[RMDB]
RNA sequence: GGGAACGACUCGAGUAGAGUCGAAAACGUCGUGAACUAGCGACAAUGCCGUAGAUCUAUCGUUAUCUAACCGAAACAUCGUGACUAGUCGUAGAAUAGAACCAGGAGCGGACGCUGCCAAACAAAGACAGGGUCUCAGAUUCGUCUGAGGCCCUGUAAAAGAAACAACAACAACAAC
Reactivity to 2A3 in 0.01 (KOAc 150mM, MgCl2 10mM, bicine 150mM(pH8.5), 24C), signal-to-noise 3, nucleotides 027 to 126: c030g000u000c000g040u040g110a110a070c060u010a090g010c000g020a020c000a010a010u130g020c010c000g060u060a020g000a070u010c030u060a080u110c110g090u090u040a040u050c070u030a020a070c030c020g030a070a020a010c030a050u070c030g020u070g050a070c020u010a040g080u080c020g010u040a030g060a150a040u080a040g010a040a000c020c030a040g020g020a040g000c020g000g000a010c010g020c020u030g040c000c000a090a070a070c050a030a150a000g130
Reactivity to DMS in 0.01 (KOAc 150mM, MgCl2 10mM, bicine 150mM(pH8.5), 24C), signal-to-noise 4, nucleotides 027 to 126: c100g000u000c020g000u000g010a160a090c100u010a110g000c040g000a020c020a080a080u040g010c050c040g010u010a090g000a060u000c050u010a100u020c070g010u000u010a080u020c070u010a070a060c130c030g010a030a060a100c170a070u000c020g010u030g010a060c050u010a090g020u000c010g000u000a030g000a050a070u010a040g000a090a040c050c050a100g010g010a100g060c040g000g000a060c040g000c010u000g010c020c060a070a060a040c190a040a080a070g000
An RNA of 177 nucleotides, treated with 2A3 and DMS and read out base by base.
For 2A3, 3,015 sequencing reads were counted.
The data come from the RNA Mapping Database (RMDB), library OK1LIB.
The reactions ran in a buffer of 150 mM KOAc, 10 mM MgCl2 and 150 mM bicine (pH 8.5), at 24 C.